[RMDB]
RNA sequence: GGGAACGACUCGAGUAGAGUCGAAAAAUCACAGGCAUUAUACAAGCAUUCACAUGGCCUUGAUGCACAUAUUAGGGAAGUACAUGGUUAGAAGAAAUAAGAUUUUGGACCAAGAACACAUUAGAUCAUGUUAGCCUCUGAUGUGGUGAAUGGUACAAUCCACAGCCAAUUUCGAUUGGCUGUGGAUAAAAGAAACAACAACAACAAC
Reactivity to 2A3 in 0.01 (KOAc 150mM, MgCl2 10mM, bicine 150mM(pH8.5), 24C), signal-to-noise 2, nucleotides 027 to 156: a000u110c000a080c080a080g000g000c000a020u050u050a020u090a160c120a110a110g040c060a040u030u130c030a020c050a170u110g070g000c010c000u100u080g040a080u150g010c040a060c010a030u080a060u030u250a040g000g000g030a000a020g020u070a010c020a050u080g050g030u040u040a040g020a070a000g040a050a200a070u090a080a030g010a150u020u110u030u060g060g010a030c010c010a020a000g060a070a000c010a020c000a050u010u010a000g020a000u060c050a010u110g260u200u170a090g050c000c050u070c000u010g000a000u070g000u020g010g080u000g040a000a010u010g000g000u000a010c030a000